[RMDB]
RNA sequence: GGGAACGACUCGAGUAGAGUCGAAAAGCGGGCAACAGGAGCCGAUGUAGAACAGCUAUAGCGGAAGUAUUCGAUGUAGCGUGACCAUUGUUUGGGGCCGUGCGCUAUUAGUUCGCUUGGCUUCCAGGUGUCUGUGUAGUUUCGGCUGCACAGGCGCAAAAGAAACAACAACAACAAC
Reactivity to DMS in 0.01 (KOAc 150mM, MgCl2 10mM, bicine 150mM(pH8.5), 24C), signal-to-noise 9, nucleotides 027 to 126: g010c040g010g010g010c030a090a090c110a120g000g000a140g010c010c030g000a050u010g010u010a070g010a130a090c150a120g000c010u000a020u010a040g010c010g000g000a050a140g020u030a070u010u010c020g010a060u010g010u000a030g000c010g000u010g000a130c070c020a100u020u020g000u010u010u010g000g000g000g000c030c040g000u010g010c020g000c060u010a080u020u040a090g010u020u010c000g000c000u000u010g000g000c050u000u010c010c020a100g000
Reactivity to 2A3 in 0.01 (KOAc 150mM, MgCl2 10mM, bicine 150mM(pH8.5), 24C), signal-to-noise 9, nucleotides 027 to 126: g040c010g010g030g010c030a090a040c020a150g060g030a010g020c010c010g010a020u080g050u090a060g040a150a050c040a050g080c030u030a010u060a060g030c020g030g040a090a060g140u140a240u080u110c050g030a050u100g030u060a020g030c020g020u050g040a050c010c020a060u070u140g130u180u120u120g050g000g010g000c030c020g040u070g010c010g000c020u030a110u110u060a090g060u060u060c010g000c000u030u050g020g000c000u140u050c010c010a020g040

Source information:
Chemical mapping of a 177-nucleotide RNA with DMS and 2A3. The DMS profile rests on 113,866 reads. Reactivities are given for positions 27 through 126. DMS adducts were read by reverse transcription with MarathonRT. The 2A3 profile rests on 118,643 reads. The RNA was probed in 150 mM KOAc, 10 mM MgCl2 and 150 mM bicine (pH 8.5) at 24 C.